[RMDB]
RNA sequence: GGGAACGACUCGAGUAGAGUCGAAAAAUCUCCCAAGAAGGAAAAAAGAGGAUUCAAGAAGCGGACGAGACCCCCAAAACGCUGGAGACAUCCUGGAAGGGGAAAGGGGAUAGGUGGAAAAGAAAGGCACAUAGAUACGGUUCGCCGUAUCUAUGUGAAAAGAAACAACAACAACAAC
Reactivity to DMS in 0.01 (KOAc 150mM, MgCl2 10mM, bicine 150mM(pH8.5), 24C), signal-to-noise 1, nucleotides 027 to 126: a170u000c190u000c000c020c040a090a060g010a100a210g000g000a000a140a050a160a090a080g010a040g000g010a000u000u010c020a060a280g000a190a060g030c040g000g030a100c130g010a060g000a230c060c020c000c000c010a070a060a070a170c030g000c060u000g000g000a200g010a180c170a020u010c020c030u000g000g000a160a060g000g000g000g000a020a090a030g040g000g000g010a090u010a080g010g020u020g000g000a050a090a040a050g000a040a060a070g000g010

Structure probing data (DMS) for a 177-nucleotide construct.
The RNA was probed in 150 mM KOAc, 10 mM MgCl2 and 150 mM bicine (pH 8.5) at 24 C.
The DMS profile rests on 538 reads.
DMS adducts were read by reverse transcription with MarathonRT.